[RMDB]
Source: RMDB library M2RFPK, as collected in RNAgym. The record gives the reactivity of an RNA of 207 nucleotides to 2A3 and DMS. The reactions ran in a buffer of 150 mM KOAc, 10 mM MgCl2 and 150 mM bicine (pH 8.5), at 24 C. 2A3 adducts were read by reverse transcription with SuperScript II with manganese.
RNA sequence: GGGAACGACUCGAGUAGAGUCGAAAACUCUUGUUAGGUGAAAGUUGAUGGUCGCCGUGUCAGUCCAUGCCUUUGAAAACAGUUCUAUGUAGUAGGGAGUCGAGAACCUAUGAGAGUCAGAACUUGCUAUGCCUUGGACUCUUCGGAGUCCAAGGAAGUCUUGUUCUAUCUUCGGAUAGAACAAGACAAAAGAAACAACAACAACAAC
Reactivity to 2A3 in 0.01 (KOAc 150mM, MgCl2 10mM, bicine 150mM(pH8.5), 24C), signal-to-noise 3, nucleotides 027 to 156: c000u010c010u030u060g110u070u120a070g020g040u050g100a130a100a070g030u060u040g060a080u070g040g020u030c020g000c040c060g030u020g020u030c030a010g050u010c010c010a050u080g010c010c020u130u100u090g100a090a090a010a010c030a030g020u060u050c050u100a100u120g040u030a040g010u010a030g040g020g020a020g050u050c020g030a000g030a130a020c020c000u020a040u050g010a060g000a010g060u050c040a010g000a040a030c000u030u080g030c030u090a060u180g030c000c000u000u000g000g010a000c000u000c000u030u010c110g100g000a000g000u000c000c000a000a000g000g000a000a000
Reactivity to DMS in 0.01 (KOAc 150mM, MgCl2 10mM, bicine 150mM(pH8.5), 24C), signal-to-noise 3, nucleotides 027 to 156: c030u000c030u000u000g010u000u000a060g040g030u000g000a090a060a110g000u010u020g030a090u010g000g020u000c050g030c030c090g000u000g010u000c040a080g000u010c050c050a100u000g020c000c010u000u000u000g020a070a090a060a070c040a060g020u000u000c040u000a050u010g020u000a230g020u000a090g010g010g010a110g000u010c060g020a260g020a070a090c010c000u000a030u000g020a240g020a120g000u000c070a060g010a070a090c010u000u000g030c020u000a120u010g000c020c000u000u000g010g010a010c010u010c000u000u000c300g060g010a030g020u000c000c000a010a000g020g010a000a020